The record gives the reactivity of an RNA of 177 nucleotides to 2A3 and DMS. Conditions: 150 mM KOAc, 10 mM MgCl2 and 150 mM bicine (pH 8.5), 24 C. The data come from the RNA Mapping Database (RMDB), library OK1LIB. Values are in units of 0.01, from 0 to 300, in steps of 10. The DMS profile rests on 3,059 reads. For DMS the reverse transcriptase was MarathonRT.
RNA sequence: GGGAACGACUCGAGUAGAGUCGAAAAUGCCGGCGAGCGCUGGCCGGAACACGACCACGGCAAGCGGACCGUGCUGUUCUACGGCGGACGCCAGGGCACCGUCCUGAAGCUGCUCGACGACCUCACGGCUCCUAAUUUACUUCGGUAAAUUAGGAGCAAAAGAAACAACAACAACAAC
Reactivity to 2A3 in 0.01 (KOAc 150mM, MgCl2 10mM, bicine 150mM(pH8.5), 24C), signal-to-noise 7, nucleotides 027 to 126: u100g010c000c000g000g010c020g020a100g020c020g000c060u060g090g020c000c020g000g020a030a010c040a010c100g100a070c110c020a040c020g010g010c060a130a070g190c150g080g030a110c010c010g010u030g000c020u010g030u040u010c050u120a090c020g010g000c020g050g090a080c070g010c030c020a070g020g010g000c040a040c040c060g070u060c000c030u040g030a030a000g030c080u100g000c000u020c010g050a040c020g030a040c010c020u080c020a060c050g080
Reactivity to DMS in 0.01 (KOAc 150mM, MgCl2 10mM, bicine 150mM(pH8.5), 24C), signal-to-noise 3, nucleotides 027 to 126: u000g010c040c000g020g000c000g000a050g010c010g040c010u000g000g000c060c050g000g000a090a050c040a090c110g060a100c240c030a110c010g000g020c050a230a060g040c190g000g010a170c000c030g000u000g000c040u010g000u010u030c090u030a150c120g000g000c020g000g010a170c020g030c010c010a160g000g000g010c020a040c070c070g000u000c040c050u010g000a080a030g010c010u020g000c110u000c040g030a140c040g010a140c020c050u000c050a170c260g000